Source: RMDB library M2PK50, as collected in RNAgym. An RNA of 177 nucleotides, treated with 2A3 and DMS and read out base by base. Values cover nucleotides 27 to 126. The reactions ran in a buffer of 150 mM KOAc, 10 mM MgCl2 and 150 mM bicine (pH 8.5), at 24 C. The 2A3 profile rests on 23,357 reads.

[RMDB]
RNA sequence: GGGAACGACUCGAGUAGAGUCGAAAACAUCAUCCCUUCGGGGAUGAUGAAAGAUCGAAAGAUCAGGCUUACCGUAAUAACCCAAAAUACGAGCGAAACGCAAAAGACCUGUGUUCGCACAGGUCAAUCCAAUUAGAUAGUUCGCUAUCUAAUUGGAAAAAGAAACAACAACAACAAC
Reactivity to 2A3 in 0.01 (KOAc 150mM, MgCl2 10mM, bicine 150mM(pH8.5), 24C), signal-to-noise 8, nucleotides 027 to 126: c000a000u000c000a000u010c000c000c000u010u040c200g060g000g000g000a000u000g000a000u000g000a010a010a000g010a000u020c020g020a060a030a020g010a010u010c010a000g120g010c020u060u090a090c070c020g020u020a030a070u080a120a110c010c010c040a010a050a040a080u100a020c050g010a020g050c040g060a160a100a030c090g000c090a060a070a040a040g010a000c000c010u000g000u000g030u060u060c210g040c070a000c000a000g000g000u000c000a000a000
Reactivity to DMS in 0.01 (KOAc 150mM, MgCl2 10mM, bicine 150mM(pH8.5), 24C), signal-to-noise 8, nucleotides 027 to 126: c010a010u000c000a010u000c000c000c000u000u010c190g030g010g010g000a010u000g000a000u000g000a040a070a070g000a010u000c010g000a130a100a140g000a010u000c010a160g010g010c050u000u000a080c180c030g010u000a040a070u000a090a120c010c010c010a050a060a100a100u000a030c030g000a080g010c040g000a050a060a080c190g000c160a050a060a120a100g000a020c000c000u000g000u000g000u000u010c210g010c010a010c000a000g000g010u000c000a020a050